Structure probing data (2A3) for a 207-nucleotide construct. For 2A3, 1,014 sequencing reads were counted. The RNA was probed in 150 mM KOAc, 10 mM MgCl2 and 150 mM bicine (pH 8.5) at 24 C. Values cover nucleotides 27 to 156. 2A3 adducts were read by reverse transcription with SuperScript II with manganese.
[RMDB]
RNA sequence: GGGAACGACUCGAGUAGAGUCGAAAAGAGUACGAGAACUCGUACUCACGAGAGUGAUCACGUGAGAUCGAUCGAGUGAGAACGUGAUCGUGAACACGAGUGUGAUCUCUCACUCGAUCGUGUACUCACGAUCACGUUCUCGUACGAACACUCGUUCCAGUCUGCCCUUGUUCGCAAGGGCAGACUGAAAAGAAACAACAACAACAAC
Reactivity to 2A3 in 0.01 (KOAc 150mM, MgCl2 10mM, bicine 150mM(pH8.5), 24C), signal-to-noise 2, nucleotides 027 to 156: g050a010g010u030a040c020g000a040g070a130a030c090u010c010g020u040a010c010u010c000a020c030g030a040g000a010g050u120g020a100u070c060a030c070g070u070g060a060g000a080u100c140g060a030u090c040g010a030g030u080g030a000g000a000a000c000g000u000g000a000u000c010g000u000g010a080a020c000a000c030g020a020g050u040g010u030g070a090u100c120u070c070u050c220a020c000u050c050g140a200u050c000g020u010g010u020a050c030u010c030a000c020g000a000u010c000a000c000g000u000u000c000u000c000g000u030a000c000g040a080a000c020a000c050u040c020g040u070u070c040